[RMDB]
RNA sequence: GGGAACGACUCGAGUAGAGUCGAAAAGGUUUGCAAAUCCGACGUCGUGAGACACGGACCUCAUGGGAAGAAGAAGCAACUUUAGUGUUAGAGAGAUACUGUUAAUGAGCUCUAACAUGUUCAAAUACCAAGCCUCGAUAUUCGUAUCGAGGCUUGGAAAAGAAACAACAACAACAAC
Reactivity to DMS in 0.01 (KOAc 150mM, MgCl2 10mM, bicine 150mM(pH8.5), 24C), signal-to-noise 1, nucleotides 027 to 126: g000g020u090u060u000g020c030a140a200a100u000c030c010g000a260c290g000u090c000g000u000g000a110g000a140c030a010c190g020g000a090c090c000u050c040a140u070g000g000g000a290a180g000a000a030g000a160a090g000c060a140a000c000u000u000u080a200g000u010g000u000u000a000g000a000g000a040g030a000u000a100c240u000g010u010u050a140a140u140g000a170g000c040u000c000u000a000a000c000a000u000g000u000u000c140a030a000a050u060a000
Reactivity to 2A3 in 0.01 (KOAc 150mM, MgCl2 10mM, bicine 150mM(pH8.5), 24C), signal-to-noise 2, nucleotides 027 to 126: g020g030u130u120u100g010c060a090a140a000u000c000c000g020a070c000g220u110c000g000u050g090a070g000a040c040a030c100g080g000a080c010c010u030c040a090u020g060g000g000a010a010g000a010a000g010a050a020g100c000a000a010c000u100u110u080a060g090u020g000u000u000a000g000a000g000a010g030a000u070a230c050u080g140u100u040a140a040u300g000a000g000c000u000c000u000a000a000c060a040u040g000u000u050c000a030a030a040u140a090